The data come from the RNA Mapping Database (RMDB), library OK2TRN.
An RNA of 177 nucleotides, treated with 2A3 and DMS and read out base by base.
Reactivities are rounded to 0.1 and cut off at 0 and 3.
Reactivities are given for positions 27 through 126.
DMS adducts were read by reverse transcription with MarathonRT.
RNA sequence: GGGAACGACUCGAGUAGAGUCGAAAAUUUCACGGCGGUCUUGGGUCCUACGCCUGGUACGCCCGGAAUGUUGUCGGACUUAUCACCCAUUAGUGCCAGGUAGUCCACAAUAAGCUCAGGACCAAUGCUAACUUUAACUCUUCGGAGUUAAAGUUAGAAAAGAAACAACAACAACAAC
Reactivity to 2A3 in 0.01 (KOAc 150mM, MgCl2 10mM, bicine 150mM(pH8.5), 24C), signal-to-noise 4, nucleotides 027 to 126: u020u080u080c070a040c050g050g000c020g000g030u000c010u010u010g040g000g000u090c010c020u080a020c050g000c020c000u000g000g000u000a010c040g030c030c030c010g020g110a130a110u160g050u170u080g080u130c060g050g030a060c020u090u130a080u170c050a080c040c010c000a050u100u180a040g010u020g020c000c010a000g030g000u000a070g010u030c050c030a070c030a090a110u140a080a020g010c000u000c000a000g000g010a000c010c020a000a000u020g000
Reactivity to DMS in 0.01 (KOAc 150mM, MgCl2 10mM, bicine 150mM(pH8.5), 24C), signal-to-noise 4, nucleotides 027 to 126: u000u010u000c040a150c080g010g030c300g010g010u000c010u010u000g020g010g010u000c060c080u010a100c100g000c010c020u000g010g000u000a030c050g010c060c030c040g000g010a090a090u010g010u000u000g000u000c090g020g000a070c060u010u010a090u010c080a130c050c030c030a110u010u010a070g030u000g010c020c010a040g010g010u000a040g000u000c080c080a070c150a050a070u000a100a130g010c050u000c030a030g000g000a030c010c020a070a190u000g000